[RMDB]
RNA sequence: GGGAACGACUCGAGUAGAGUCGAAAAGUGAGGUGAGGGUCCCAGAAGGCAGGGGCCGGGGGCAGGAGGCGGCUGAAACCAGCGCUCUGCUGGGGUCCAGCCUGGUGGUCCCAGCUGUCCACACGGCCUUAUACGAACUAUUCGUAGUUCGUAUAAGAAAAGAAACAACAACAACAAC
Reactivity to 2A3 in 0.01 (KOAc 150mM, MgCl2 10mM, bicine 150mM(pH8.5), 24C), signal-to-noise 5, nucleotides 027 to 126: g050u040g020a040g030g040u080g060a150g030g020g000u030c030c000c010a030g080a060a030g050g020c090a030g000g010g010g040c020c020g020g030g000g020g010c050a030g040g280a080g100g200c080g050g010c020u020g030a120a030a030c040c000a010g010c040g020c130u130c100u250g000c000u010g020g030g000g000u040c050c010a000g000c010c020u040g020g040u080g010g020u020c010c010c010a010g020c020u040g020u050c030c010a030c010a020c060g050g000c000
Reactivity to DMS in 0.01 (KOAc 150mM, MgCl2 10mM, bicine 150mM(pH8.5), 24C), signal-to-noise 9, nucleotides 027 to 126: g020u000g000a090g010g010u000g000a100g000g010g010u000c040c020c030a130g000a130a090g010g020c090a090g020g010g010g010c020c030g010g010g000g010g010c030a050g000g010a090g010g010c110g000g020c010u000g000a050a100a100c080c010a020g010c020g020c230u010c130u010g010c000u000g000g010g000g010u010c080c020a050g000c020c020u000g000g020u000g010g010u010c030c010c020a120g000c020u000g000u010c020c020a080c090a130c060g000g000c060